Structure probing data (2A3) for a 207-nucleotide construct. For 2A3, 371 sequencing reads were counted.
RNA sequence: GGGAACGACUCGAGUAGAGUCGAAAAAUAAUCACCUUUAACCAUAGUAGCUCCUUGCUCAAUACGAGUUUUAUAAGUGCACAGUGGCAGAGUACUUCUCUUUGAUGGAACAAUAGUUUCAGUAUUGGUAAUAUCACCAUUAACGGCAACAUUGGUCAGGUGCACAACAUUUCGAUGUUGUGCACCUAAAAGAAACAACAACAACAAC
Reactivity to 2A3 in 0.01 (KOAc 150mM, MgCl2 10mM, bicine 150mM(pH8.5), 24C), signal-to-noise 1, nucleotides 027 to 156: a000u180a000a170u050c000a010c000c000u060u040u060a130a020c030c020a050u070a000g120u090a020g000c000u020c010c010u050u110g000c000u000c040a040a100u300a260c110g000a030g040u060u040u110u160a090u000a060a080g000u040g020c080a110c100a110g000u080g010g000c000a000g000a000g110u000a040c020u110u100c020u040c000u160u020u110g060a040u080g070g000a050a000c040a110a140u050a170g020u000u020u160c050a040g020u000a020u040u060g080g000u000a010a010u000a060u060c000a030c000c000a000u030u010a050a000c060g020g000c050a020a000c010a210u010u000g000g000u000c040
The reactions ran in a buffer of 150 mM KOAc, 10 mM MgCl2 and 150 mM bicine (pH 8.5), at 24 C.